Conditions: 150 mM KOAc, 10 mM MgCl2 and 150 mM bicine (pH 8.5), 24 C. Chemical mapping of a 177-nucleotide RNA with DMS and 2A3. DMS (dimethyl sulfate) methylates the pairing face of unpaired adenines and cytosines. For DMS the reverse transcriptase was MarathonRT. The 2A3 profile rests on 1,126 reads. For DMS, 3,641 sequencing reads were counted.
[RMDB]
RNA sequence: GGGAACGACUCGAGUAGAGUCGAAAAAUCAACAUAGGGACCAUUGGACACGUUGACCACGGUAAAACUACGCUAACAGCUGCAAUCACACGCGCACUGUCAGCAGAGGGGUUAGCUAAUUUUUGUGACACCAAGAAAUGUUCGCAUUUCUUGGUGUAAAAGAAACAACAACAACAAC
Reactivity to DMS in 0.01 (KOAc 150mM, MgCl2 10mM, bicine 150mM(pH8.5), 24C), signal-to-noise 4, nucleotides 027 to 126: a080u010c080a070a050c070a100u000a090g020g010g010a070c060c040a110u020u010g000g010a070c080a050c100g000u000u000g000a070c070c040a080c080g010g010u000a050a040a040a070c090u010a100c150g010c010u000a020a030c020a040g000c180u000g050c020a050a110u000c170a050c100a060c150g020c090g010c050a060c060u010g000u000c070a090g010c010a050g020a070g000g010g010g010u000u000a060g010c030u030a030a060u000u010u000u010u010g000u000g000
Reactivity to 2A3 in 0.01 (KOAc 150mM, MgCl2 10mM, bicine 150mM(pH8.5), 24C), signal-to-noise 2, nucleotides 027 to 126: a020u050c020a020a070c050a080u210a080g080g000g010a000c020c000a050u040u100g020g030a040c110a020c120g070u030u040g000a000c000c040a010c080g040g020u000a010a040a000a110c040u050a040c060g000c030u000a010a000c000a010g000c060u070g000c020a010a130u160c050a040c020a020c090g090c010g050c040a010c070u000g040u050c050a020g060c030a030g100a030g050g110g000g000u040u020a010g000c020u080a100a190u070u080u060u060u140g100u090g060